RNA sequence: GGGAACGACUCGAGUAGAGUCGAAAAGCCGGGCUACAUGGCGACUGGGGAGGGCGUCGUCACUGAGAACGGCAACUUCAUAGGCAUGAUCCUGGAGAAGAUCGAUGGCAAGCAGCCCAGCAAGCGCCACACAGCGACAGUUCGCUGUCGCUGUGUGAAAAGAAACAACAACAACAAC
Reactivity to DMS in 0.01 (KOAc 150mM, MgCl2 10mM, bicine 150mM(pH8.5), 24C), signal-to-noise 1, nucleotides 027 to 126: g020c060c020g000g030g000c030u000a110c000a110u010g010g000c010g000a020c040u000g040g000g000g010a100g000g000g010c260g000u010c000g080u010c030a040c280u010g000a070g020a100a180c070g020g020c000a170a050c040u000u000c040a090u000a080g000g020c080a050u000g010a050u000c050c020u010g020g010a140g000a010a140g020a080u010c020g020a150u010g020g000c010a050a120g010c070a100g000c060c000c050a060g000c040a170a050g000c200g000c140
Reactivity to 2A3 in 0.01 (KOAc 150mM, MgCl2 10mM, bicine 150mM(pH8.5), 24C), signal-to-noise 1, nucleotides 027 to 126: g000c000c000g030g030g000c000u070a110c100a080u000g010g010c000g020a030c020u040g060g040g000g010a100g000g030g030c050g000u000c000g000u020c020a030c160u110g020a070g000a090a000c020g040g000c000a000a020c010u100u060c020a090u120a150g080g000c060a040u080g050a100u130c040c020u030g080g030a080g010a130a020g010a030u070c020g070a070u070g030g000c000a020a020g020c040a010g010c000c000c000a020g010c030a040a010g080c060g000c020